[RMDB]
RNA sequence: GGGAACGACUCGAGUAGAGUCGAAAAGCUCUGAGAGACAGAUCGAACAACAAAGAGAGAGCGAAAAUCUUAGGGGAGAGAACGAAUCUGUCGUCUUCUCUAGGACAUUGUCGAUCAGAUGUCCAAAGACCAAUCAUAGGUUCGCCUAUGAUUGGUCAAAAGAAACAACAACAACAAC
Reactivity to 2A3 in 0.01 (KOAc 150mM, MgCl2 10mM, bicine 150mM(pH8.5), 24C), signal-to-noise 4, nucleotides 027 to 126: g010c000u000c000u010g010a020g000a000g000a020c020a010g050a060u060c020g040a090a110c030a030a050c030a010a290a020g090a030g000a000g010a000g010c050g020a010a050a020a070u010c020u020u010a000g030g010g000g000a000g010a010g020a070a050c050g030a080a210u130c060u090g140u040c060g080u010c010u000u000c000u000c000u000a020g010g000a000c010a090u060u100g020u010c020g000a000u000c010a000g040a060u080g100u050c010c000a030a060a000
Reactivity to DMS in 0.01 (KOAc 150mM, MgCl2 10mM, bicine 150mM(pH8.5), 24C), signal-to-noise 2, nucleotides 027 to 126: g000c070u000c000u000g010a000g000a270g000a050c010a010g000a100u000c010g010a250a110c160a040a110c210a070a110a090g000a140g010a090g000a080g000c010g000a040a060a130a230u000c000u000u000a000g000g000g000g000a000g000a040g000a070a020c090g010a020a130u050c070u050g000u010c020g010u020c020u000u020c010u000c000u000a010g030g010a010c150a110u000u000g000u020c000g020a130u000c000a060g000a020u020g000u000c000c000a150a100a190